Notes: Structure probing data (DMS) for a 177-nucleotide construct. The data come from the RNA Mapping Database (RMDB), library TTRDEL. The RNA was probed in 150 mM KOAc, 10 mM MgCl2 and 150 mM bicine (pH 8.5) at 24 C.
[RMDB]
RNA sequence: GGGAACGACUCGAGUAGAGUCGAAAAGAUAUGGAGCCUGAUUGGGAGUACCAUUCGGAAACGAAUGACGAGGAUCAAUAGGCUCCUAAGUCAAACAUCUAUUCUGCGUUCGCGCAGAAUAGAUGAAGUGUUAUUUCAGGUUCGCCUGAAAUAACACAAAAGAAACAACAACAACAAC
Reactivity to DMS in 0.01 (KOAc 150mM, MgCl2 10mM, bicine 150mM(pH8.5), 24C), signal-to-noise 3, nucleotides 027 to 126: g000a030u000a300u000g000g000a020g050c000c000u000g030a020u000u000g020g000g010a120g000u000a140c140c000a010u000u000c000g020g000a080a070a160c010g000a020a000u000g000a070c060g000a200g000g000a060u010c000a020a010u000a050g010g000c010u000c000c000u000a010a050g010u000c030a080a100a260c010a000u000c000u000a000u000u000c000u000g020c010g000u000u010c240g000c000g020c000a010g000a010a000u000a000g010a000u000g010a020a100